Structure probing data (2A3 and DMS) for a 207-nucleotide construct. As a SHAPE reagent, 2A3 marks flexible, mostly unpaired nucleotides at the ribose 2'-OH. The reactions ran in a buffer of 150 mM KOAc, 10 mM MgCl2 and 150 mM bicine (pH 8.5), at 24 C. Reactivities are given for positions 27 through 156.
RNA sequence: GGGAACGACUCGAGUAGAGUCGAAAAAGUUGAGGUACACCAAGAGAGAAUGGAUAAAUAAUUAUUUGGACUAAGAUGUAGUAUAUUCAAAACAUUCCACUCUAUAUCUGUGUCCUGUUGCUGUAACAAUUUACCAAAAAUAUAGUGGCUUAAAACAGACGUAAUAGUGAUUCGUCACUAUUACGUCAAAAGAAACAACAACAACAAC
Reactivity to 2A3 in 0.01 (KOAc 150mM, MgCl2 10mM, bicine 150mM(pH8.5), 24C), signal-to-noise 3, nucleotides 027 to 156: a000g100u070u080g000a030g000g030u050a010c010a020c010c030a100a010g060a000g000a010g020a100a070u090g000g010a040u090a130a090a030u120a050a090u210u120a110u240u120u060g000g000a000c020u050a060a090g010a030u030g020u010a010g010u020a070u020a040u290u240c070a030a020a060a040c050a060u240u070c080c020a040c020u020c000u000a010u000a010u040c010u020g050u010g010u010c000c010u010g040u030u030g000c060u020g050u060a060a020c040a080a100u020u060u100a110c020c020a040a000a010a190a000u130a020u050a110g040u010g000g000c030u090u050a080a070a010a000c030a080
Reactivity to DMS in 0.01 (KOAc 150mM, MgCl2 10mM, bicine 150mM(pH8.5), 24C), signal-to-noise 2, nucleotides 027 to 156: a100g040u010u000g000a050g010g040u010a040c020a060c050c050a080a150g020a210g020a070g000a070a030u000g010g010a090u000a020a070a070u000a090a140u000u020a190u020u000u010g040g000a070c030u000a180a060g030a040u000g020u010a040g000u000a100u000a050u000u000c080a040a080a090a040c060a170u000u000c130c070a060c120u010c010u000a020u000a040u000c010u010g000u000g020u000c030c030u020g040u000u010g020c010u000g010u000a060a100c090a060a100u000u000u000a110c040c040a020a040a080a060a150u010a100u000a040g020u000g010g010c040u000u000a040a020a060a070c040a150